[RMDB]
RNA sequence: GGGAACGACUCGAGUAGAGUCGAAAAGGCGGAAUCCCGAAAUCCCUCCGAAACGCGCGCAAAUAAAGGGAGGGAGGGAUGAUCCCGAAAGCGCGCGACGGGGUGAAGGCUCAACGGCCGAACGCCACCGGGACCAGGUAUUCGUACCUGGUCCCGGAAAAGAAACAACAACAACAAC
Reactivity to 2A3 in 0.01 (KOAc 150mM, MgCl2 10mM, bicine 150mM(pH8.5), 24C), signal-to-noise 2, nucleotides 027 to 126: g000g000c000g040g040a020a050u020c000c000c000g000a010a040a030u010c000c000c000u000c040c020g120a210a170a070c010g010c020g000c000g000c020a010a130a070u300a180a130a030g040g000g000a030g000g020g000a060g000g000g020a060u130g030a060u050c020c000c000g000a100a000a020g040c030g000c000g000c000g000a030c000g000g000g000g000u060g070a070a020g010g020c020u050c150a150a070c060g020g000c030c000g030a040a000c000g050c000c000a020
Reactivity to DMS in 0.01 (KOAc 150mM, MgCl2 10mM, bicine 150mM(pH8.5), 24C), signal-to-noise 1, nucleotides 027 to 126: g040g050c010g040g040a250a020u010c000c000c000g000a050a050a050u020c070c020c000u000c030c000g060a170a130a100c020g040c000g060c010g000c030a150a090a080u060a060a140a130g020g010g000a100g010g000g010a000g000g040g000a290u000g000a050u000c000c000c000g000a190a110a110g000c000g050c120g000c000g040a300c150g000g000g000g150u080g000a020a110g000g080c000u000c100a110a050c300g060g000c000c000g090a050a150c100g060c020c060a260
Notes: An RNA of 177 nucleotides, treated with 2A3 and DMS and read out base by base. The RNA was probed in 150 mM KOAc, 10 mM MgCl2 and 150 mM bicine (pH 8.5) at 24 C.